RNA sequence: GGGAACGACUCGAGUAGAGUCGAAAAAGAGGAGGCUGGGUUUUGCGAUCUUUAAGCAGAUGGCAGGUUCUCCCCGUACGGUGCGGAAGUUCGCGCUUCCGUGAAACGCGAAAAUCGGACGGUGGCUAAGACCAAUAACAGUUCGCUGUUAUUGGAACCCUAAUAAGGGGUUCGCCCCUUAUUAGGGAAAAGAAACAACAACAACAAC
Reactivity to 2A3 in 0.01 (KOAc 150mM, MgCl2 10mM, bicine 150mM(pH8.5), 24C), signal-to-noise 3, nucleotides 027 to 156: a000g050a020g010g000a040g030g010c050u040g040g040g000u020u080u090u060g010c020g020a040u020c050u060u150u090a110a030g040c040a010g020a050u050g030g000c000a000g010g030u040u020c030u000c000c000c000c020g010u010a020c010g000g020u050g010c010g010g020a010a010g000u060u190c060g060c030g000c130u010u000c010c010g000u020g040a050a100a010c110g010c010g060a030a040a010a060u030c000g000g020a000c010g000g070u110g030g000c030u070a070a010g060a100c000c000a010a000u000a000a000c010a010g030u070u070c130g070c140u000g000u000u000a000u000u000g000g000a020a040
Reactivity to DMS in 0.01 (KOAc 150mM, MgCl2 10mM, bicine 150mM(pH8.5), 24C), signal-to-noise 2, nucleotides 027 to 156: a070g000a070g020g000a060g020g020c010u010g000g010g010u000u010u010u000g000c030g010a110u000c020u000u010u010a080a170g020c090a040g010a050u000g010g010c020a080g020g000u000u000c040u000c020c030c000c000g010u000a030c030g030g030u000g010c040g010g000a080a050g010u010u000c170g020c270g000c010u000u010c020c100g020u000g010a060a060a040c040g000c030g030a080a060a110a050u000c020g010g000a020c000g000g000u000g010g010c050u000a070a110g010a160c000c010a020a020u000a010a000c000a020g000u000u010c300g020c010u010g000u020u000a020u000u010g000g000a020a050